Structure probing data (DMS and 2A3) for a 177-nucleotide construct. For DMS, 1,327 sequencing reads were counted. For 2A3 the reverse transcriptase was SuperScript II with manganese.
RNA sequence: GGGAACGACUCGAGUAGAGUCGAAAAUUCAGCAAUGGAUAGUAUUUACGAAGUCAUGUAAAUCGUAAUAUCUAGAGGAAGGUGAAGUCGUAACAAGGUUUCCGUAGGUGAACCUGCAGAAGGAUCAGUAAAUUCUGUACUUCGGUACAGAAUUUACAAAAGAAACAACAACAACAAC
Reactivity to DMS in 0.01 (KOAc 150mM, MgCl2 10mM, bicine 150mM(pH8.5), 24C), signal-to-noise 2, nucleotides 027 to 126: u000u000c030a040g000c160a110a070u000g000g010a080u000a030g000u020a080u030u000u000a020c030g020a050a070g030u030c190a100u000g010u000a040a110a100u010c030g010u000a060a050u010a080u000c040u000a050g010a100g000g010a210a070g010g000u000g000a010a050g000u000c060g020u000a040a060c160a060a090g030g030u000u000u000c020c060g020u000a060g010g030u000g020a020a020c020c010u000g000c120a090g000a040a030g010g010a120u000c050a130
Reactivity to 2A3 in 0.01 (KOAc 150mM, MgCl2 10mM, bicine 150mM(pH8.5), 24C), signal-to-noise 1, nucleotides 027 to 126: u070u040c040a040g010c060a060a110u080g010g080a030u050a060g050u070a110u040u030u030a010c030g000a050a030g110u100c080a050u140g090u300a080a000a000u020c010g000u000a050a060u040a080u110c030u000a000g000a010g110g030a070a030g030g000u000g030a030a010g040u020c010g030u000a000a060c050a120a040g000g040u050u120u040c010c030g080u030a030g000g080u050g060a090a070c000c010u010g010c030a010g080a170a030g040g000a050u050c060a010